[RMDB]
RNA sequence: GGGAACGACUCGAGUAGAGUCGAAAAGAAAGAAAGAAAGAAAUCUGACAGAAUGACGGAUUCGAUCGUUGUGGUCGGCGGGCCACCACGUCAUUCCUUCGCACUAUCUCCGGGCAGACCGCCAUAAAAAAGCGGAUCUACUUCGGUAGAUCCGCAAGGCAAUCAAUGAGUUCGCUCAUUGAUUGCCAAAAGAAACAACAACAACAAC
Reactivity to 2A3 in 0.01 (KOAc 150mM, MgCl2 10mM, bicine 150mM(pH8.5), 24C), signal-to-noise 1, nucleotides 027 to 156: g020a000a050a000g080a130a120a000g060a000a100a000g110a040a110a060u060c050u010g050a030c010a020g160a030a120u170g030a030c030g000g160a020u090u290c200g030a010u120c030g030u040u070g010u010g000g000u050c000g010g040c050g010g010g000c000c000a000c000c010a000c000g010u000c020a000u010u050c010c010u040u050c010g110c010a010c030u030a000u230c060u030c100c020g070g000g000c080a060g050a080c010c010g070c020c030a070u200a040a160a000a020a000a000g020c000g030g000a000u000c000u050a000c010u010u030c090g030g000u000a000g000a000u000c000c000g000c000a000a000
Chemical mapping of a 207-nucleotide RNA with 2A3.
2A3 is a SHAPE reagent: it acylates the 2'-hydroxyl of flexible nucleotides of all four kinds.
2A3 adducts were read by reverse transcription with SuperScript II with manganese.
The reactions ran in a buffer of 150 mM KOAc, 10 mM MgCl2 and 150 mM bicine (pH 8.5), at 24 C.